Source: RMDB library 15KLIB, as collected in RNAgym.
This 170-nucleotide RNA was probed chemically with DMS and 2A3.
Values cover nucleotides 27 to 129.
The DMS profile rests on 65,747 reads.
Conditions: 150 mM KOAc, 10 mM MgCl2 and 150 mM bicine (pH 8.5), 24 C.
For 2A3, 36,502 sequencing reads were counted.
RNA sequence: GGGAACGACUCGAGUAGAGUCGAAAAAUAGGCUUAUCAAGAGAGGUGGAGGGACUGGACCGAUGAAACCCGGCAGCCAGAAAUGGUGCCAUUUCCUGCAGCGGAAACGUUGAAAGAUGAGCCGAUGGCGCUCUAUUCUUCGGAAUAGAGAAAAGAAACAACAACAACAAC
Reactivity to DMS in 0.01 (KOAc 150mM, MgCl2 10mM, bicine 150mM(pH8.5), 24C), signal-to-noise 8, nucleotides 027 to 129: a060u020a040g010g010c050u000u010a000u020c040a140a080g010a110g010a080g010g020u020g000g030a070g010g010g020a080c060u010g000g000a000c020c010g000a080u000g010a040a070a100c060c080c020g000g000c050a020g020c010c020a040g000a060a080a090u010g000g000u000g030c000c020a030u000u000u040c000c020u020g000c030a020g000c050g030g010a040a050a070c030g050u040u010g000a090a040a090g020a060u010g000a050g030c000c050g020a040u010g000g020c090g020
Reactivity to 2A3 in 0.01 (KOAc 150mM, MgCl2 10mM, bicine 150mM(pH8.5), 24C), signal-to-noise 9, nucleotides 027 to 129: a000u130a030g020g010c000u040u040a020u100c090a130a020g090a010g010a040g120g020u090g030g020a030g010g010g010a000c020u040g020g010a010c000c040g040a060u100g050a040a040a030c020c020c000g010g010c020a030g120c010c000a010g040a010a050a010u070g020g000u030g010c020c000a020u020u030u020c010c000u030g050c030a010g020c010g020g000a060a030a030c030g010u020u050g050a120a070a010g040a030u030g000a000g000c000c010g000a030u080g060g010c040g010